RNA sequence: GGGAACGACUCGAGUAGAGUCGAAAAACAGGACGGGCGUCGGUUCGCGUUAGGGUCCGCGCUCGCGGGAAGAAGGUUGACAUGACGCAGCCAGUGCAGACGAUUGACGUGUUGCUCGCCGAACACGACGUGCGCAUUUAUUCGUAAAUGCGCACGUAAAAGAAACAACAACAACAAC
Reactivity to 2A3 in 0.01 (KOAc 150mM, MgCl2 10mM, bicine 150mM(pH8.5), 24C), signal-to-noise 3, nucleotides 027 to 126: a000c060a040g130g120a040c000g000g000g110c010g040u220c020g020g090u110u120c090g030c040g240u080u180a130g040g080g000u050c010c000g000c000g000c010u090c060g070c010g000g010g020a060a040g030a010a060g170g020u080u050g040a050c020a100u140g020a040c040g000c020a000g030c020c000a030g020u060g100c000a020g000a050c030g020a110u000u170g040a050c060g000u020g030u050u040g000c010u020c020g010c010c000g000a020a010c010a020c070g030
Reactivity to DMS in 0.01 (KOAc 150mM, MgCl2 10mM, bicine 150mM(pH8.5), 24C), signal-to-noise 2, nucleotides 027 to 126: a110c080a190g010g000a150c090g050g000g030c030g000u010c130g010g010u040u000c040g000c050g020u000u050a100g000g000g020u000c020c050g000c000g000c010u000c050g010c000g000g000g020a120a100g010a040a020g020g000u040u010g010a090c050a030u040g020a100c090g000c010a100g000c090c000a030g010u010g000c020a130g030a050c120g000a120u000u010g010a070c050g020u000g000u050u010g010c040u060c010g000c000c060g000a040a040c070a050c080g010

Conditions: 150 mM KOAc, 10 mM MgCl2 and 150 mM bicine (pH 8.5), 24 C. This 177-nucleotide RNA was probed chemically with 2A3 and DMS. The 2A3 profile rests on 1,329 reads.